The record gives the reactivity of an RNA of 177 nucleotides to 2A3 and DMS. For 2A3, 1,707 sequencing reads were counted. High DMS reactivity at an A or C suggests that its Watson-Crick edge is free.
RNA sequence: GGGAACGACUCGAGUAGAGUCGAAAACGGAAGUUCCAUUCCCGUAGGGUUACAAUGUGUUGCUAGAAUAAACCGUAAGUCAUAGUACAUAUAGAGGCCAAUUCUGUAAACUUUUUUAAAGUCUAUGCGUUCUUAUAAACUUCGGUUUAUAAGAACGAAAAGAAACAACAACAACAAC
Reactivity to 2A3 in 0.01 (KOAc 150mM, MgCl2 10mM, bicine 150mM(pH8.5), 24C), signal-to-noise 2, nucleotides 027 to 126: c020g020g050a030a100g110u100u030c020c000a010u100u010c000c000c010g010u050a060g090g050g000u070u030a050c060a120a060u070g040u020g030u090u090g040c020u030a030g020a140a050u140a160a120a070c080c050g090u060a100a000g020u010c010a070u010a040g030u030a020c010a010u080a010u020a090g150a040g060g020c000c010a020a080u110u000c000u030g050u030a080a070a080c000u070u070u070u020u070u300a060a080a040g000u050c040u040a030u080g080
Reactivity to DMS in 0.01 (KOAc 150mM, MgCl2 10mM, bicine 150mM(pH8.5), 24C), signal-to-noise 4, nucleotides 027 to 126: c090g010g020a120a130g020u010u000c050c050a240u000u000c010c010c010g020u020a110g020g020g010u000u000a090c110a070a050u010g010u000g020u000u000g030c030u000a040g010a090a070u000a060a100a150c070c080g000u000a070a110g010u000c040a070u000a050g010u000a030c030a030u000a060u000a080g010a170g010g010c040c040a050a070u010u000c040u010g010u010a040a060a090c010u000u000u020u010u030u030a050a040a090g010u000c040u000a040u010g010